RNA sequence: GGGAACGACUCGAGUAGAGUCGAAAAGUCGCCGCGUCCACAUCAACGCCCAGCGCGGGCGAGGGAUGCGUCCUACGGGGGUGCCCCAUUCGCCGGCAUGGCAGAGGACGGCAAGAUUGCCGCGACGGCGUACGGAUUAGUUCGCUAAUCCGUACGCAAAAGAAACAACAACAACAAC
Reactivity to 2A3 in 0.01 (KOAc 150mM, MgCl2 10mM, bicine 150mM(pH8.5), 24C), signal-to-noise 1, nucleotides 027 to 126: g020u000c020g010c040c010g040c040g030u020c030c000a080c010a180u130c040a090a110c080g030c030c010c020a050g040c300g080c140g230g020g010c000g000a030g050g000g020a030u190g000c010g040u040c000c000u010a150c180g220g030g000g000g030u070g030c000c000c000c040a100u100u080c000g000c000c000g090g000c050a050u050g000g000c010a030g050a080g060g000a030c000g010g000c010a030a000g140a220u080u270g040c010c010g000c030g000a020c000g040
Reactivity to DMS in 0.01 (KOAc 150mM, MgCl2 10mM, bicine 150mM(pH8.5), 24C), signal-to-noise 3, nucleotides 027 to 126: g040u000c010g030c060c130g000c050g040u000c020c050a160c100a120u000c070a090a140c140g000c090c000c090a140g000c190g030c050g020g000g000c000g010a020g000g010g000a060u000g030c020g010u010c000c000u000a090c230g050g010g020g010g000u000g010c020c030c000c010a170u000u000c010g010c010c000g010g010c010a090u010g000g010c010a160g020a130g000g010a060c020g000g010c060a060a120g000a120u010u000g000c030c070g020c000g030a050c060g000